Overview:
The record gives the reactivity of an RNA of 177 nucleotides to DMS and 2A3. The DMS profile rests on 2,525 reads. The reactions ran in a buffer of 150 mM KOAc, 10 mM MgCl2 and 150 mM bicine (pH 8.5), at 24 C. Reactivities are given for positions 27 through 126. For DMS the reverse transcriptase was MarathonRT.
[RMDB]
RNA sequence: GGGAACGACUCGAGUAGAGUCGAAAACUUGGACAAGAGGACGGUGGCGAGAACGUAGCGCCCCUGGCUGGUUACGGUUUCGGUCUUCCCAUGUCGAGAGUUUAUGCCCGGCACUUUGGUGGAGAUCAGUAUCCGACCUAUUCGUAGGUCGGAUACUAAAAGAAACAACAACAACAAC
Reactivity to DMS in 0.01 (KOAc 150mM, MgCl2 10mM, bicine 150mM(pH8.5), 24C), signal-to-noise 1, nucleotides 027 to 126: c020u000u020g010g030a060c070a050a090g000a060g000g010a080c070g000g040u000g000g030c030g000a050g000a060a140c100g010u020a000g000c050g010c040c010c050c050u000g040g000c000u010g010g020u000u000a030c090g030g000u000u000u000c000g000g000u010c000u010u000c000c020c030a160u010g000u000c000g010a140g000a070g000u000u000u060a070u060g000c040c040c020g010g000c050a060c150u010u050u000g010g000u050g000g000a100g030a030u000c060
Reactivity to 2A3 in 0.01 (KOAc 150mM, MgCl2 10mM, bicine 150mM(pH8.5), 24C), signal-to-noise 3, nucleotides 027 to 126: c000u030u060g030g070a010c040a070a030g010a050g040g020a030c080g020g040u090g030g080c030g000a030g050a080a020c040g040u150a010g010c020g020c010c000c000c030u010g030g020c020u010g040g030u040u070a020c040g060g000u010u010u020c000g000g000u000c000u010u040c000c010c000a020u020g000u000c040g020a050g000a070g260u000u190u160a170u260g030c000c000c000g000g020c020a050c030u120u140u100g030g010u170g010g040a040g000a010u010c020